[RMDB]
RNA sequence: GGGAACGACUCGAGUAGAGUCGAAAAAGAUAUGGAGGUGUGGGAGUCUCGAUGUGGGUGACCACGUAGGCUCGGAAACGAGCCUAUAUCAACCCACCCGAGACGAAGAACACACCUCCUAAGUCAAGAUCCAUUCAUUCUUCGGAAUGAAUGGAUCAAAAGAAACAACAACAACAAC
Reactivity to DMS in 0.01 (KOAc 150mM, MgCl2 10mM, bicine 150mM(pH8.5), 24C), signal-to-noise 2, nucleotides 027 to 126: a020g020a020u000a300u020g010g060a040g000g010u000g010u000g050g000g020a080g000u010c000u000c010g000a060u030g020u000g010g040g020u010g040a260c300c240a060c200g030u000a010g000g000c010u000c000g000g010a060a090a080c010g010a000g010c010c000u000a000u000a020u000c190a140a060c000c000c000a000c010c270c000g010a040g010a010c000g000a060a060g000a130a250c020a010c010a010c010c000u000c010c000u000a000a020g000u000c030a160a210
Reactivity to 2A3 in 0.01 (KOAc 150mM, MgCl2 10mM, bicine 150mM(pH8.5), 24C), signal-to-noise 1, nucleotides 027 to 126: a010g080a030u130a030u160g020g010a010g000g040u000g010u020g000g070g050a080g000u030c010u020c010g040a100u150g010u010g020g000g010u010g010a090c020c120a110c190g000u000a000g000g000c000u000c000g010g000a060a050a010c000g010a000g020c030c010u030a010u000a000u050c030a030a190c000c000c000a000c000c000c020g000a000g010a000c030g050a300a000g020a020a000c010a000c010a000c020c000u000c000c000u010a010a010g010u010c020a000a080

Background: This 177-nucleotide RNA was probed chemically with DMS and 2A3. The reactions ran in a buffer of 150 mM KOAc, 10 mM MgCl2 and 150 mM bicine (pH 8.5), at 24 C.